[RMDB]
RNA sequence: GGGAACGACUCGAGUAGAGUCGAAAAGAGGCUUCGGCCUCGCAGGAUCCUAAGUCGCACCCGAUGAGAGAAAUUGUCAGAGGCCCAUCGGAAACGAUGGGCCUCUUGGAUUUAUUUCUCGAGGGUGCGAUAUGGAAUUAUACCAAUUCGUUGGUAAUCCUAUAUUUCCAUUCGUGGAAAUAUAGGAAAAAGAAACAACAACAACAAC
Reactivity to DMS in 0.01 (KOAc 150mM, MgCl2 10mM, bicine 150mM(pH8.5), 24C), signal-to-noise 2, nucleotides 027 to 156: g000a020g030g040c050u010u010c300g080g020c010c000u000c000g010c090a100g010g000a070u000c000c000u000a080a300g010u000c010g020c000a020c020c000c000g010a290u010g020a270g000a020g020a030a010a020u000u010g000u000c030a050g020a050g040g000c010c020c010a010u010c050g000g000a140a080a220c000g050a010u000g000g010g020c000c000u000c000u000u000g020g000a030u000u010u000a040u000u000u000c000u010c000g000a150g020g000g020u000g030c000g000a010u000a020u010g010g000a080a060u000u000a140u010a100c030c010a040a090u000u010c130g000u000u000g010g010u000a040a240
Source information
Source: RMDB library RNAMAK, as collected in RNAgym. Chemical mapping of a 207-nucleotide RNA with DMS. Conditions: 150 mM KOAc, 10 mM MgCl2 and 150 mM bicine (pH 8.5), 24 C. The DMS profile rests on 3,891 reads. Reactivities are given for positions 27 through 156.